[RMDB]
RNA sequence: GGGAACGACUCGAGUAGAGUCGAAAAAUAAUCGAGCUUCAAAACUUUAGAAAAUAGUAGAAAUAGCAUUCAAUAUAGUGCAAAAGUGCAAAUUGAUAACUUGACACUUAUCUCCUAUAAACCGUACCCCUAUAGCUUAAUUCGUUAAGCUAUAGGGAAAAGAAACAACAACAACAAC
Reactivity to 2A3 in 0.01 (KOAc 150mM, MgCl2 10mM, bicine 150mM(pH8.5), 24C), signal-to-noise 2, nucleotides 027 to 126: a000u110a010a040u060c060g020a020g030c000u090u060c070a040a040a120a160c020u150u200u180a070g040a050a220a030a010u040a030g020u010a000g020a020a170a000u080a020g020c000a010u000u030c020a040a060u110a060u080a200g020u010g030c020a110a080a040a000g040u000g000c000a010a040a040u060u050g020a030u050a110a040c010u000u040g090a060c010a000c030u050u070a040u040c010u010c000c000u060a060u090a120a130a060c040c010g050u080a070c030
Reactivity to DMS in 0.01 (KOAc 150mM, MgCl2 10mM, bicine 150mM(pH8.5), 24C), signal-to-noise 2, nucleotides 027 to 126: a070u010a080a090u010c090g000a040g010c010u000u030c190a100a090a130a100c020u010u010u000a130g020a070a130a110a060u000a020g000u010a030g000a030a080a090u030a110g010c000a060u000u000c090a080a120u000a110u000a040g010u000g000c040a040a100a030a020g010u000g000c020a020a020a050u000u000g010a100u000a070a080c080u000u000g000a080c040a010c010u000u000a190u000c060u000c020c000u000a060u000a050a070a090c100c100g000u000a100c220